[RMDB]
RNA sequence: GGGAACGACUCGAGUAGAGUCGAAAAGAUAUGGACUCUUUGUACGAGCUGGUGAUCGGAAACGAUCACACAGCGAUGAGUACAUGGAGUCCUAAGUCAAAAGUAUAUGCUGUUCGCAGCAUAUACACAUGAUGUGCUACUUCGGUAGCACAUCAUGAAAAGAAACAACAACAACAAC
Reactivity to DMS in 0.01 (KOAc 150mM, MgCl2 10mM, bicine 150mM(pH8.5), 24C), signal-to-noise 3, nucleotides 027 to 126: g000a020u000a010u010g000g010a010c000u000c000u000u010u000g050u000a010c000g010a060g040c010u000g000g000u000g000a010u000c010g000g000a000a010a020c000g010a020u010c010a020c020a060c010a010g020c000g010a090u020g010a180g030u000a010c000a000u000g000g010a020g030u000c000c000u000a000a070g000u010c010a130a130a160a160g010u000a010u000a000u000g010c000u000g020u000u010c280g030c000a020g010c000a010u000a000u000a000c000a240
Reactivity to 2A3 in 0.01 (KOAc 150mM, MgCl2 10mM, bicine 150mM(pH8.5), 24C), signal-to-noise 1, nucleotides 027 to 126: g010a000u040a010u030g000g000a010c010u000c000u000u040u030g020u000a050c100g080a100g050c000u000g000g000u000g010a010u010c000g000g040a020a010a000c000g010a000u000c040a000c170a010c010a010g020c000g060a160u250g140a030g010u010a000c000a000u020g020g000a000g020u010c010c010u000a000a000g000u000c020a050a030a060a050g000u000a010u000a000u020g000c010u020g080u100u110c300g020c130a000g000c000a000u010a000u000a000c000a000